The record gives the reactivity of an RNA of 207 nucleotides to 2A3.
For 2A3 the reverse transcriptase was SuperScript II with manganese.
The reactions ran in a buffer of 150 mM KOAc, 10 mM MgCl2 and 150 mM bicine (pH 8.5), at 24 C.
RNA sequence: GGGAACGACUCGAGUAGAGUCGAAAAACCUGUCCCUGUCGCUGGUGGAUAAGGAUUUGGAUUCGUUCAGCGAGGGCAGCCUGGGCUCCCACUUCGAGUUCCCCGACUACUGCACGCCGGAGCUGAGCGAGAUGAUCGCGGGGGACUGGCUGGAGGCCACUCCUCCGAUAUUCGUAUCGGAGGAGUGAAAAGAAACAACAACAACAAC
Reactivity to 2A3 in 0.01 (KOAc 150mM, MgCl2 10mM, bicine 150mM(pH8.5), 24C), signal-to-noise 2, nucleotides 027 to 156: a000c050c010u050g100u140c020c000c000u120g260u200c030g000c050u060g010g030u160g000g020a040u060a190a120g150g060a130u100u090u300g130g020a060u040u040c000g040u050u160c000a000g000c020g020a040g000g010g000c000a040g000c000c040u080g030g000g000c000u000c010c130c020a150c060u160u150c080g060a030g010u030u130c020c000c000c000g040a040c000u220a060c040u070g030c160a020c070g000c000c050g050g050a040g000c020u000g000a030g000c010g010a010g020a050u180g000a020u160c030g010c050g030g000g000g000g040a020c000u000g040g000c000u000g010g020a040g020g100c000